[RMDB]
RNA sequence: GGGAACGACUCGAGUAGAGUCGAAAACGUCCGUUCGCGGACGCACGACGCGUACUACGAGAUAAGACAGUCGCAACUGACUGUUCCCAAAUAGGAACAGCAAUGGUUGACCCGACAAUGACGUCUCGUAUCGCACCAGCUGCCUUUCGAGGCAGAACCCUCCUUACGGGUUCGCCCGUAAGGAGGGAAAAGAAACAACAACAACAAC
Reactivity to 2A3 in 0.01 (KOAc 150mM, MgCl2 10mM, bicine 150mM(pH8.5), 24C), signal-to-noise 3, nucleotides 027 to 156: c010g000u000c000c000g020u090u070c280g010c020g110g000a010c000g000c020a040c140g300a150c110g010c010g000u030a120c010u000a010c000g020a000g010a030u070a170a070g100a100c010a040g050u000c020g020c020a030a000c000u190g210a060c000u000g010u000u010c020c000c000a110a150a200u300a050g000g000a000a000c000a000g010c090a110a050u140g060g000u000u020g060a130c190c080c040g000a000c020a050a210u150g070a060c100g010u000c000u020c000g000u000a000u300c020g020c000a010c000c000a060g070c010u020g000c000c030u100u150u110c210g130a020g010g000c010a000g010a010a030